[RMDB]
RNA sequence: GGGAACGACUCGAGUAGAGUCGAAAAGUUCUGUUGCCAAGGCUGGAGUGCAGUGAUGCGAUCACAGCUCACUGCAGCCUCAACUUCCUGGGCUCAGGUGAUCCUCCCACCUCCGCUUCUGGAGUAGCUGGGACCACAGUUACACUGCACCACUCCACUCACUAUCAUGCUUCGGCAUGAUAGUGAGAAAAGAAACAACAACAACAAC
Reactivity to 2A3 in 0.01 (KOAc 150mM, MgCl2 10mM, bicine 150mM(pH8.5), 24C), signal-to-noise 1, nucleotides 027 to 156: g070u120u070c020u010g000u020u030g010c080c060a050a020g020g040c120u140g110g100a030g070u040g020c020a000g010u000g130a070u230g020c070g010a000u080c040a020c030a080g060c050u030c030a040c020u010g000c000a000g000c020c000u030c030a070a080c000u040u020c000c030u020g010g010g000c000u060c010a010g180g000u030g060a050u010c000c000u000c000c010c000a000c000c020u000c020c000g150c210u240u080c050u270g000g000a000g000u040a010g000c070u020g010g000g010a020c020c000a070c020a040g020u110u110a000c000a040c040u020g030c010a090c020c000a050c000u070c000c040a040